[RMDB]
RNA sequence: GGGAACGACUCGAGUAGAGUCGAAAAGUUUUCGAGUAGUCCCGGACCUAUCUAAAUUGGAGUCAUCCGACCGUAUGGAGAAAAUUUCCGACAAGAGGUGAUCCACUGAGGGUUUGCGGAAAAAUCAAAAGGACGCUGUUCGCAGCGUCCAAAAGAAACAACAACAACAAC
Reactivity to 2A3 in 0.01 (KOAc 150mM, MgCl2 10mM, bicine 150mM(pH8.5), 24C), signal-to-noise 2, nucleotides 027 to 129: g020u040u000u000u110c000g060a020g010u050a000g050u020c000c000c000g000g000a020c000c040u120a300u240c060u200a060a040a040u140u120g020g010a040g200u090c000a020u070c000c010g020a050c010c020g020u110a090u130g040g000a000g150a000a050a000a050u030u010u020c010c000g020a010c040a000a000g190a050g060g000u010g010a000u000c020c010a000c030u090g000a050g000g040g000u000u000u000g100c150g030g060a130a080a010a000a000u090c060a000a000a000a000